The data come from the RNA Mapping Database (RMDB), library TTRDEL.
An RNA of 177 nucleotides, treated with 2A3 and DMS and read out base by base.
Conditions: 150 mM KOAc, 10 mM MgCl2 and 150 mM bicine (pH 8.5), 24 C.
Reactivities are given for positions 27 through 126.
For 2A3 the reverse transcriptase was SuperScript II with manganese.
DMS (dimethyl sulfate) methylates the pairing face of unpaired adenines and cytosines.

RNA sequence: GGGAACGACUCGAGUAGAGUCGAAAAGAUAUGGACUAGGCGAUGAGAUGUGUGUCGGAAACGACACCAUCGAGCCUAGGUCCUAAGUCAAAAUCGUUAGAUACCACUUCGGUGGUAUCUAACGAAAGAUUAACACUCGGUUCGCCGAGUGUUAAUCAAAAGAAACAACAACAACAAC
Reactivity to 2A3 in 0.01 (KOAc 150mM, MgCl2 10mM, bicine 150mM(pH8.5), 24C), signal-to-noise 4, nucleotides 027 to 126: g020a010u080a040u150g000g000a020c000u000a000g020g020c040g300a300u200g110a140g000a180u010g300u000g010u000g000u110c010g020g000a050a080a040c000g010a000c010a000c010c000a000u000c000g000a000g000c000c000u000a000g000g010u010c010c000u020a120a020g090u040c060a000a000a010a300u030c000g000u000u000a000g000a000u000a000c000c000a000c020u060u090c300g130g000u000g010g000u010a000u000c000u000a000a000c000g000a010a000a000
Reactivity to DMS in 0.01 (KOAc 150mM, MgCl2 10mM, bicine 150mM(pH8.5), 24C), signal-to-noise 6, nucleotides 027 to 126: g010a040u010a300u010g010g000a190c000u000a000g000g010c010g010a150u020g000a200g010a010u000g000u020g010u010g010u000c000g000g000a070a090a210c010g010a010c000a000c000c000a000u000c000g000a080g010c000c000u000a010g010g010u000c000c000u010a050a130g000u000c050a090a100a120a120u000c000g010u000u000a000g000a010u000a010c010c000a010c000u000u010c210g040g010u000g000g000u000a000u000c000u000a000a000c000g010a000a020a080